Annotation
The data come from the RNA Mapping Database (RMDB), library RSTRND. Structure probing data (2A3) for a 207-nucleotide construct. Reactivities are given for positions 27 through 156. The RNA was probed in 150 mM KOAc, 10 mM MgCl2 and 150 mM bicine (pH 8.5) at 24 C. The 2A3 profile rests on 2,465 reads.
[RMDB]
RNA sequence: GGGAACGACUCGAGUAGAGUCGAAAAGGAUAUACUCUACCAGAGCCCACUUGUAGAGCGAAUUUAAGGGCUUAGCUUAGUGUGUCUUGAUCAUCAGGCUACACCAAAGUGAAUUAAAUUGAUGAAUCUAAGUAUGUAGAGACUAGGGGAAAGUGAUCACUAUACCAUGCUUCGGCAUGGUAUAGUGAAAAGAAACAACAACAACAAC
Reactivity to 2A3 in 0.01 (KOAc 150mM, MgCl2 10mM, bicine 150mM(pH8.5), 24C), signal-to-noise 4, nucleotides 027 to 156: g010g010a030u040a010u010a070c000u000c000u010a000c010c040a000g020a040g030c000c000c000a060c000u010u020g010u010a000g000a000g000c000g010a060a080u200u240u290a300a170g010g010g000c010u190u300a000g000c000u000u040a030g020u010g010u000g000u030c000u040u060g020a080u090c020a040u050c000a020g010g010c000u090a030c020a020c010c030a100a030a010g010u000g020a010a030u180u150a080a060a080u100u120g000a020u030g020a060a050u030c040u060a060a060g040u080a100u140g030u080a030g020a030g040a090c020u060a040g000g000g010g040a030a040a060g050u060g080a060u020